[RMDB]
RNA sequence: GGGAACGACUCGAGUAGAGUCGAAAAUCGCGGUCCAGGCGCAGCUGCCGGAUGUCAACAACAUCCAGCCGAACUCGCGGGUGCGGGUUGCCGACGUGACGGUCGGCCACGUCACGAAAAUCGAGCGGAAGGAUGGGUCAUUCGUGACCCAUCCUUCAAAAGAAACAACAACAACAAC
Reactivity to DMS in 0.01 (KOAc 150mM, MgCl2 10mM, bicine 150mM(pH8.5), 24C), signal-to-noise 1, nucleotides 027 to 126: u000c010g050c030g010g000u000c060c050a220g010g020c010g030c090a060g000c030u000g000c000c080g000g000a040u000g000u040c050a170a120c290a080a060c010a000u000c000c000a250g040c000c060g000a130a090c040u000c050g030c040g010g000g060u010g000c040g000g000g000u000u010g010c010c030g010a070c000g000u000g000a120c200g000g000u000c040g000g010c010c040a060c010g000u000c010a040c080g000a110a040a040a070u040c150g010a180g030c180g000
The data come from the RNA Mapping Database (RMDB), library OK2TST.
An RNA of 177 nucleotides, treated with DMS and read out base by base.
Reactivities are given for positions 27 through 126.
The RNA was probed in 150 mM KOAc, 10 mM MgCl2 and 150 mM bicine (pH 8.5) at 24 C.